An RNA of 177 nucleotides, treated with DMS and read out base by base.
The reactions ran in a buffer of 150 mM KOAc, 10 mM MgCl2 and 150 mM bicine (pH 8.5), at 24 C.
Source: RMDB library TTRINS, as collected in RNAgym.
Reactivities are given for positions 27 through 126.
[RMDB]
RNA sequence: GGGAACGACUCGAGUAGAGUCGAAAAGAUAUGGACAACCCCUAGAAUAGCUAUUUAGCAACAGCUACACAUCGGAAACGAUGUCGUAGACAUGCUAAAUAGCUAUUCUAGGCGUUGUCCUAAGUCAUCUACAAUUAGCGUUCGCGCUAAUUGUAGAAAAAGAAACAACAACAACAAC
Reactivity to DMS in 0.01 (KOAc 150mM, MgCl2 10mM, bicine 150mM(pH8.5), 24C), signal-to-noise 3, nucleotides 027 to 126: g000a090u000a300u010g020g010a030c010a000a000c000c130c000c000u000a000g010a020a000u000a020g000c000u000a000u000u010u000a000g000c000a020a160c300a240g000c000u010a020c010a040c010a010u000c000g000g020a140a150a300c010g000a010u010g010u000c280g030u000a020g010a020c110a180u010g010c000u000a000a010a010u010a010g010c000u000a010u000u010c000u000a000g000g030c300g010u000u000g000u010c000c000u000a010a070g010u000c030a140